[RMDB]
Source: RMDB library OK2TST, as collected in RNAgym.
Structure probing data (DMS) for a 177-nucleotide construct.
Reactivities are given for positions 27 through 126.
The RNA was probed in 150 mM KOAc, 10 mM MgCl2 and 150 mM bicine (pH 8.5) at 24 C.

RNA sequence: GGGAACGACUCGAGUAGAGUCGAAAAGGAAGACUGUGCAGGGUGCCCCAAAAAGAGCAGAACUUACCAGAGAAAUCGCCUGAUCUUUAAGGCAAAGGACAGCCAAUGCCCCUGAGAUUAAAUGCUGAUACCUAUGGGACUUCGGUCCCAUAGGUAUAAAAGAAACAACAACAACAAC
Reactivity to DMS in 0.01 (KOAc 150mM, MgCl2 10mM, bicine 150mM(pH8.5), 24C), signal-to-noise 2, nucleotides 027 to 126: g010g020a120a100g000a060c090u020g010u010g000c080a070g050g020g030u010g020c020c000c020c070a010a030a100a040a140g000a050g010c000a050g020a100a170c090u000u000a070c060c050a120g000a090g020a060a080a060u000c120g000c040c070u020g020a110u000c060u030u000u000a220a140g030g000c090a020a060a250g010g010a090c140a090g010c030c010a020a240u000g000c050c010c020c060u010g010a050g000a070u010u000a080a080a050u020g000c080u000g000